[RMDB]
RNA sequence: GGGAACGACUCGAGUAGAGUCGAAAAUAAAUCCUUUGCAGACGACUUGAAUCAGAGCGGGGUACUGUAAGCAGUAGAGUAGCCUUGUUGCUACGAUCUGCUGAGGUUCAUCCCUUGUUCUAAAGAUUUAUCGUUAGGGUUUCGACCCUAACGAUAAAAAAGAAACAACAACAACAAC
Reactivity to DMS in 0.01 (KOAc 150mM, MgCl2 10mM, bicine 150mM(pH8.5), 24C), signal-to-noise 4, nucleotides 027 to 126: u060a050a080a130u040c020c010u000u000u030g040c080a070g020a140c100g000a050c140u000u030g010a120a090u010c120a070g010a050g010c010g010g000g010g020u020a020c020u000g010u060a190a030g000c010a000g010u010a040g000a300g000u010a020g010c010c020u030u020g010u020u020g010c000u000a010c000g000a140u000c010u000g010c000u000g000a120g000g000u000u040c180a080u010c010c000c000u010u010g020u000u000c020u010a060a130a100g000a090u010
Reactivity to 2A3 in 0.01 (KOAc 150mM, MgCl2 10mM, bicine 150mM(pH8.5), 24C), signal-to-noise 3, nucleotides 027 to 126: u160a010a080a030u050c020c000u050u060u180g060c060a040g010a100c050g020a030c040u110u170g120a060a040u190c050a030g000a000g000c000g000g000g040g010u010a020c010u000g060u110a030a010g010c030a000g020u220a020g050a010g070u000a000g030c010c000u070u260g160u230u180g070c010u000a000c000g000a020u000c000u000g000c000u000g000a020g030g010u040u050c020a210u200c000c010c000u030u190g000u000u000c010u030a080a040a020g060a060u000

An RNA of 177 nucleotides, treated with DMS and 2A3 and read out base by base. Reactivities are given for positions 27 through 126. For 2A3 the reverse transcriptase was SuperScript II with manganese. DMS adducts were read by reverse transcription with MarathonRT.